[RMDB]
RNA sequence: GGGAACGACUCGAGUAGAGUCGAAAAGUUGGUAAUUUACUCAGAAUAAUUUCCAAUAUCUUAAUAUAUAAUUCUGCUAUUUCUGGGAUACAUUUAUCCGCCAUCAUAACACAAAUACUAAUACAUGAUGGAUGGAAUCUUUCGAGAUUCCAUCCAUAAAAGAAACAACAACAACAAC
Reactivity to 2A3 in 0.01 (KOAc 150mM, MgCl2 10mM, bicine 150mM(pH8.5), 24C), signal-to-noise 1, nucleotides 027 to 126: g040u050u050g000g010u000a000a000u000u000u050a080c010u020c070a000g050a130a090u060a010a030u060u070u000c000c000a010a010u010a060u250c000u020u210a210a140u070a220u170a130u100a300a240u170u030c060u050g010c000u010a030u150u050u000c030u010g000g000g000a020u040a120c000a110u030u170u090a130u010c010c010g000c020c010a050u060c000a030u190a300a080c100a060c060a210a130a050u040a050c070u080a030a110u120a040c050a150u130g040